This 177-nucleotide RNA was probed chemically with DMS and 2A3. The 2A3 profile rests on 1,449 reads. The reactions ran in a buffer of 150 mM KOAc, 10 mM MgCl2 and 150 mM bicine (pH 8.5), at 24 C. The DMS profile rests on 1,596 reads. The data come from the RNA Mapping Database (RMDB), library TTRDES.
[RMDB]
RNA sequence: GGGAACGACUCGAGUAGAGUCGAAAAAAAAAGAUAUGGAGAUGAACUACGCUGUUACAGCAGCGAAGAACUAGGGUCGGAAACGACCCUAGGGAGCUGAAGGUGGGCGCAUCUCCUAAGUCAAAAACCUAUCUUGAUAGUUCGCUAUCAAGAUAGGAAAAGAAACAACAACAACAAC
Reactivity to DMS in 0.01 (KOAc 150mM, MgCl2 10mM, bicine 150mM(pH8.5), 24C), signal-to-noise 1, nucleotides 027 to 126: a000a050a000a180a070g000a020u000a080u000g010g030a030g020a020u000g020a150a050c030u010a250c020g050c030u020g050u000u000a070c230a150g000c010a020g010c010g000a050a080g000a190a160c010u000a000g000g030g020u000c010g010g000a020a060a090c000g000a010c000c000c000u000a010g000g000g010a100g000c070u010g000a050a080g010g020u000g020g000g000c240g000c010a020u000c000u010c010c010u000a000a060g010u010c030a040a100a040a060a170
Reactivity to 2A3 in 0.01 (KOAc 150mM, MgCl2 10mM, bicine 150mM(pH8.5), 24C), signal-to-noise 1, nucleotides 027 to 126: a000a000a000a000a000g040a000u090a030u140g010g010a010g000a010u020g010a020a070c050u250a030c240g060c060u040g150u300u190a130c080a100g110c000a010g000c040g190a300a020g000a020a010c010u010a000g000g020g040u000c000g000g000a040a060a030c020g000a000c000c050c010u000a010g030g000g000a020g000c010u050g050a140a080g300g100u140g110g050g000c060g000c030a000u000c000u000c000c010u030a030a030g000u000c050a000a000a210a000a000